[RMDB]
RNA sequence: GGGAACGACUCGAGUAGAGUCGAAAAGUAUCGGUGACCAUGGAUUAGAGUACAUGACUGGUGGACAUGUCAUUAAUUUAGGUGAUGUAGGUAAGAACUUCGGUCAAGGUAUGAGUGGUGGUAUUGCCGUAAUGGUUGCAUUCGUGCAACCAUUACGAAAAGAAACAACAACAACAAC
Reactivity to DMS in 0.01 (KOAc 150mM, MgCl2 10mM, bicine 150mM(pH8.5), 24C), signal-to-noise 4, nucleotides 027 to 126: g020u010a060u010c030g000g010u000g010a030c050c050a080u010g000g000a060u000u020a110g010a120g010u030a060c060a060u010g000a060c040u000g030g010u020g010g010a080c080a070u020g020u020c030a060u020u000a040a050u010u030u030a070g010g000u010g030a080u000g000u020a050g020g010u030a030a080g010a040a100c060u020u000c040g020g000u010c040a060a090g000g020u000a020u010g010a070g010u010g010g030u000g000g010u010a070u000u030g000c210
Reactivity to 2A3 in 0.01 (KOAc 150mM, MgCl2 10mM, bicine 150mM(pH8.5), 24C), signal-to-noise 6, nucleotides 027 to 126: g080u070a040u210c050g020g100u040g060a020c010c030a080u100g040g010a060u060u100a100g020a030g090u090a020c010a030u050g020a020c040u050g030g030u090g040g090a040c020a050u070g010u040c030a030u000u210a140a120u060u080u200a080g000g010u040g050a030u070g080u110a040g060g030u040a120a000g040a140a060c020u050u050c050g020g030u040c030a030a020g050g000u060a050u150g050a060g060u050g010g030u030g030g060u140a130u090u220g030c020